[RMDB]
RNA sequence: GGGAACGACUCGAGUAGAGUCGAAAAAUUCUCGCCCGAUGCCCGAAAGGAGAGACGCUGACAGUGGGAUUUACGGACAGCAGAAAGAUCAGCCACACAUGCACACACCCGUUCCAUCAUGAACCACGAUGUGUCCUACAUUCGUGUAGGACACAUCAAAAGAAACAACAACAACAAC
Reactivity to DMS in 0.01 (KOAc 150mM, MgCl2 10mM, bicine 150mM(pH8.5), 24C), signal-to-noise 2, nucleotides 027 to 126: a140u010u000c010u000c000g010c020c000c000g030a140u000g010c050c060c030g020a040a090a120g000g000a110g010a110g020a150c140g020c040u010g020a060c050a050g010u010g010g000g000a120u010u000u000a050c090g000g010a070c030a070g000c040a070g010a080a080a090g000a070u000c070a040g000c000c040a040c060a000c090a040u000g000c050a010c080a070c070a070c020c020c010g000u010u000c040c010a060u000c130a060u000g000a060a080c090c060a110c220
This 177-nucleotide RNA was probed chemically with DMS. The RNA was probed in 150 mM KOAc, 10 mM MgCl2 and 150 mM bicine (pH 8.5) at 24 C. For DMS the reverse transcriptase was MarathonRT. The DMS profile rests on 1,094 reads. Source: RMDB library OK2TRN, as collected in RNAgym.